RNA sequence: GGGAACGACUCGAGUAGAGUCGAAAAGAUAUGGACCUACCCAGCUUUUGACGCUUCCCUGGUCGGAAACGACCAGUGGAAGCGAUAAGCUGGUAGGUCCUAAGUCAAACCCGUCUUCGGACGGGAAUCUUAAUCCUCUGUUCGCAGAGGAUUAAGAAAAAGAAACAACAACAACAAC
Reactivity to 2A3 in 0.01 (KOAc 150mM, MgCl2 10mM, bicine 150mM(pH8.5), 24C), signal-to-noise 1, nucleotides 027 to 126: g030a000u060a020u060g010g000a000c000c020u010a000c140c090c050a000g050c030u180u160u130u300g220a130c250g000c000u000u020c000c000c000u000g030g000u010c000g000g030a060a050a040c000g010a010c000c010a000g010u040g010g020a030a000g000c010g000a000u020a000a000g010c000u000g020g000u010a000g000g000u000c000c000u000a000a000g010u000c000a010a040a100c000c010c010g000u000c010u050u070c240g190g000a000c000g030g000g000a010a070
Reactivity to DMS in 0.01 (KOAc 150mM, MgCl2 10mM, bicine 150mM(pH8.5), 24C), signal-to-noise 3, nucleotides 027 to 126: g000a050u000a300u000g000g000a010c010c000u000a010c150c070c090a020g020c000u010u000u000u010g020a190c130g000c000u000u000c000c000c010u000g010g020u000c000g020g000a100a080a200c000g020a030c010c000a020g000u010g030g000a010a010g040c020g000a010u010a010a020g010c000u000g000g010u000a000g010g010u000c000c000u000a010a050g010u000c040a130a210a210c000c000c000g000u000c000u000u010c240g040g000a000c000g000g010g010a020a030